Source: RMDB libraries RFM100 and RFMREP, as collected in RNAgym.
The record gives the reactivity of an RNA of 177 nucleotides to 2A3 and DMS.
Conditions: 150 mM KOAc, 10 mM MgCl2 and 150 mM bicine (pH 8.5), 24 C.
Reactivities are rounded to 0.1 and cut off at 0 and 3.
DMS (dimethyl sulfate) methylates the pairing face of unpaired adenines and cytosines.
[RMDB]
RNA sequence: GGGAACGACUCGAGUAGAGUCGAAAACUGACCAAGAGAGAAGGGAAAGCAUUUUGUUCUGACCAUAAUGACAUAAGGAGUUCAUUUCACACCAAACAUCUUUCCAGCAUGUUUCUCCCAUUGAGAAACUUUAGUUUGUAUUCGUACAAACUAAAGUAAAAGAAACAACAACAACAAC
Reactivity to 2A3 in 0.01 (KOAc 150mM, MgCl2 10mM, bicine 150mM(pH8.5), 24C), signal-to-noise 9, nucleotides 027 to 126: c030u050g060a060c010c030a090a010g050a000g010a010g020a080a070g040g010g010a040a050a020g030c060a060u030u040u050u080g050u070u040c050u040g050a080c010c010a030u090a130a070u100g040a020c030a050u200a100a090g110g020a070g060u060u040c010a020u040u050u070c060a060c010a020c040c030a040a050a020c020a040u020c020u020u040u010c010c000a020g030c040a060u080g060u030u070u010c030u000c000c020c030a060u080u230g070a110g070a070a050
Reactivity to DMS in 0.01 (KOAc 150mM, MgCl2 10mM, bicine 150mM(pH8.5), 24C), signal-to-noise 9, nucleotides 027 to 126: c070u010g010a140c070c050a080a080g000a070g010a070g010a080a080g010g000g000a050a050a060g010c180a070u010u000u010u000g010u010u010c080u010g010a110c220c080a060u010a040a050u010g000a050c080a080u030a090a090g010g010a100g000u010u000c040a030u010u010u000c080a060c080a060c100c040a040a040a050c110a040u000c020u000u010u000c030c030a090g000c110a060u010g000u010u000u000c040u000c010c050c040a130u030u010g010a090g000a070a070